[RMDB]
RNA sequence: GGGAACGACUCGAGUAGAGUCGAAAACGGGAAGCUGAGGUAGGAGGAUCGCUUGAGCCCAGGAGUUCUGGGCUGCAGUGUGCUCUGCCAUUCGGGUAUCUGCACCAAGUUCAGCAACAAUAUGGUGACUUGGAUCAGUUUUCGAACUGAUCCAAGUAAAAGAAACAACAACAACAAC
Reactivity to DMS in 0.01 (KOAc 150mM, MgCl2 10mM, bicine 150mM(pH8.5), 24C), signal-to-noise 4, nucleotides 027 to 126: c090g010g010g010a100a110g020c040u010g010a050g000g020u000a050g030g010a050g010g010a070u000c050g010c010u000u010g030a070g000c010c000c010a010g010g010a190g020u000u010c010u000g020g000g010c020u000g000c040a060g010u000g010u000g000c020u000c020u010g000c000c030a160u000u010c090g010g020g010u000a080u010c040u000g020c060a050c030c020a030a160g010u000u000c050a040g010c050a060a050c120a070a080u010a090u000g010g010u010g010
Reactivity to 2A3 in 0.01 (KOAc 150mM, MgCl2 10mM, bicine 150mM(pH8.5), 24C), signal-to-noise 3, nucleotides 027 to 126: c020g020g030g050a030a030g020c040u040g030a010g020g050u090a070g050g140a030g000g000a070u120c030g000c010u100u140g070a000g030c000c000c000a040g040g040a260g140u280u180c010u010g000g000g000c000u010g040c000a010g000u030g000u040g030c010u020c010u050g000c020c010a030u100u150c050g050g000g030u050a100u060c010u060g010c020a020c000c010a010a000g020u080u040c030a030g040c030a000a060c020a100a080u130a060u190g000g060u060g030
The record gives the reactivity of an RNA of 177 nucleotides to DMS and 2A3.
Source: RMDB library OK2TRN, as collected in RNAgym.
2A3 adducts were read by reverse transcription with SuperScript II with manganese.
For DMS, 5,506 sequencing reads were counted.
For 2A3, 3,696 sequencing reads were counted.
Conditions: 150 mM KOAc, 10 mM MgCl2 and 150 mM bicine (pH 8.5), 24 C.
Reactivities are given for positions 27 through 126.